About this RNA:
The record gives the reactivity of an RNA of 177 nucleotides to 2A3 and DMS. Source: RMDB library OK1LIB, as collected in RNAgym. For DMS, 119,495 sequencing reads were counted. The reactions ran in a buffer of 150 mM KOAc, 10 mM MgCl2 and 150 mM bicine (pH 8.5), at 24 C.
RNA sequence: GGGAACGACUCGAGUAGAGUCGAAAAUUUGCACGCCGGUGGAGGUGACUACGCGUGUAAGGUGUUCGUGACUCCCACGAGCUUUUCGUUGUCGGCGCGUGUUUCAAGAGUCCGCGUCCGCCACCGAAGUCUGUGUUGGAUUCGUCCAGCACGGGCUAAAAGAAACAACAACAACAAC
Reactivity to 2A3 in 0.01 (KOAc 150mM, MgCl2 10mM, bicine 150mM(pH8.5), 24C), signal-to-noise 9, nucleotides 027 to 126: u020u000u030g010c010a010c010g020c030c060g100g010u070g030g150a190g080g100u190g070a060c020u070a030c070g010c000g000u010g000u020a030a030g090g040u070g020u030u020c020g010u020g100a110c040u030c040c020c000a010c010g010a010g010c000u070u080u040u050c020g020u010u020g020u010c000g000g000c000g000c010g010u140g070u070u130u140c150a150a040g050a030g150u010c020c000g000c000g030u040c010c000g000c000c000a030c030c010g020a020
Reactivity to DMS in 0.01 (KOAc 150mM, MgCl2 10mM, bicine 150mM(pH8.5), 24C), signal-to-noise 9, nucleotides 027 to 126: u020u010u010g010c020a020c010g010c020c110g000g020u010g010g010a150g010g000u030g010a080c030u010a080c260g000c010g010u000g010u000a030a030g010g010u010g000u000u000c020g010u010g000a120c100u010c030c060c000a110c030g000a040g000c030u010u010u020u010c040g010u000u000g000u000c040g000g000c040g010c010g000u030g010u010u020u020c190a110a130g010a140g000u010c070c010g000c010g000u040c010c010g000c030c000a020c030c010g010a070